RNA sequence: GGGAACGACUCGAGUAGAGUCGAAAAAGCCGGUCUACGGACCGGCAAAACGUUCAUCUCGUUUUACGGGCAGCAUUAAGAUUGAAGCCAAGGAACGGGGACUUCAGACUACGACUACGGUCGUAGAUUACGCCUCCGAGUUUCGACUCGGAGGCAAACAUAUACUCUUGUUCGCAAGAGUAUAUGUAAAAGAAACAACAACAACAAC
Reactivity to 2A3 in 0.01 (KOAc 150mM, MgCl2 10mM, bicine 150mM(pH8.5), 24C), signal-to-noise 1, nucleotides 027 to 156: a000g000c020c000g000g000u000c010u090a140c300g110g010a020c000c000g010g000c030a010a000a000a000c030g020u120u050c130a230u040c060u020c020g030u030u030u040u010a080c080g000g010g000c000a010g000c020a040u080u130a170a000g080a170u080u110g040a110a030g000c000c020a020a000g060g010a040a040c010g010g010g000g100a040c010u070u050c130a050g030a130c000u000a000c000g010a000c000u000a000c110g110g000u000c000g000u000a000g000a000u050u050a080c140g050c010c010u040c000c030g000a020g010u050u060u070c110g110a040c000u010c000g000g000a000g010g000c000a000a000
Reactivity to DMS in 0.01 (KOAc 150mM, MgCl2 10mM, bicine 150mM(pH8.5), 24C), signal-to-noise 1, nucleotides 027 to 156: a160g010c000c000g040g020u010c010u000a080c300g060g010a040c000c000g000g020c040a010a010a010a070c050g000u010u010c080a170u010c020u000c030g000u000u000u000u000a050c070g050g000g010c040a110g030c050a110u000u020a100a120g010a200u010u000g000a050a060g040c030c020a050a070g000g000a050a050c000g010g010g100g010a130c030u000u000c020a130g000a270c010u000a000c000g010a010c000u000a080c300g030g000u000c010g020u000a000g000a090u010u010a050c080g000c000c020u020c000c000g000a040g020u000u000u020c240g010a040c020u000c000g000g000a000g010g000c020a010a010
Notes
Structure probing data (2A3 and DMS) for a 207-nucleotide construct. For 2A3 the reverse transcriptase was SuperScript II with manganese. The RNA was probed in 150 mM KOAc, 10 mM MgCl2 and 150 mM bicine (pH 8.5) at 24 C. The 2A3 profile rests on 566 reads.